[RMDB]
RNA sequence: GGGAACGACUCGAGUAGAGUCGAAAAAGGUAUGGACGUCAGCGCAAUCUCAACGACUACCAACUUGCACGUUAUGCAUUUGACUUUUAUGAGAUAACGUCGAGGACACCGAAUCGUGCACGAGAAGGCGUAUUCUAUCUUUCGAGAUAGAAUACGCAAAAGAAACAACAACAACAAC
Reactivity to 2A3 in 0.01 (KOAc 150mM, MgCl2 10mM, bicine 150mM(pH8.5), 24C), signal-to-noise 6, nucleotides 027 to 126: a000g130g010u120a080u200g020g020a030c030g030u070c040a030g020c010g020c090a060a100u030c020u010c040a030a050c020g030a030c020u050a040c020c000a030a040c020u030u020g020c180a010c020g030u030u050a020u060g070c050a060u060u030u120g190a270c050u170u160u120u110a070u100g090a140g010a100u020a040a010c010g000u010c010g020a010g010g030a020c030a030c080c000g030a010a010u050c030g010u040g030c060a030c110g050a040g020a050a040g130
Reactivity to DMS in 0.01 (KOAc 150mM, MgCl2 10mM, bicine 150mM(pH8.5), 24C), signal-to-noise 6, nucleotides 027 to 126: a080g000g000u010a030u010g000g020a080c110g000u010c110a090g010c050g000c080a080a110u010c030u010c030a100a090c060g010a100c050u010a070c050c050a080a110c020u010u010g010c200a020c040g010u000u010a030u000g010c010a030u000u000u000g010a120c220u020u010u010u000a030u000g000a060g010a030u000a000a020c040g020u000c020g010a020g000g000a140c080a150c080c040g000a090a140u010c040g030u000g010c050a070c120g010a110g010a070a110g000